Overview
An RNA of 177 nucleotides, treated with 2A3 and DMS and read out base by base. The RNA was probed in 150 mM KOAc, 10 mM MgCl2 and 150 mM bicine (pH 8.5) at 24 C. It was measured as part of the RMDB library RFM100.
RNA sequence: GGGAACGACUCGAGUAGAGUCGAAAAAGGAACGCUUCGUUCACCAUCAACUCAAUCAAAAUGACUCCCUGCUCCGCAACACCUGCUCCUGCUCCAGCGACUGCAACGGCUGCUCCUGCUCCUCUUGACCUCUACACGUGUUCGCACGUGUAGAGGUAAAAGAAACAACAACAACAAC
Reactivity to 2A3 in 0.01 (KOAc 150mM, MgCl2 10mM, bicine 150mM(pH8.5), 24C), signal-to-noise 4, nucleotides 027 to 126: a000g120g020a050a020c040g000c120u130u080c050g050u000u020c040a070c080c000a080u100c030a010a100c010u010c040a040a130u040c020a030a110a080a180u120g070a110c030u040c010c000c010u020g010c010u030c010c020g000c010a040a030c000a040c020c010u030g030c020u040c010c000u000g030c000u040c030c020a000g000c000g070a060c010u020g010c010a010a060c060g040g010c010u010g000c000u020c000c000u030g010c010u010c000c000u050c020u020u070g030
Reactivity to DMS in 0.01 (KOAc 150mM, MgCl2 10mM, bicine 150mM(pH8.5), 24C), signal-to-noise 1, nucleotides 027 to 126: a080g000g000a020a110c040g030c040u040u000c010g010u000u000c020a090c060c040a120u060c060a190a080c090u050c060a010a220u040c140a060a040a090a170u000g000a040c010u000c090c010c060u010g010c040u000c000c020g010c180a100a080c090a020c010c000u020g060c000u000c020c020u000g000c030u020c000c000a090g020c020g010a080c000u000g000c110a080a000c000g000g000c040u000g040c060u020c020c010u000g000c090u000c040c010u000c000u010u000g020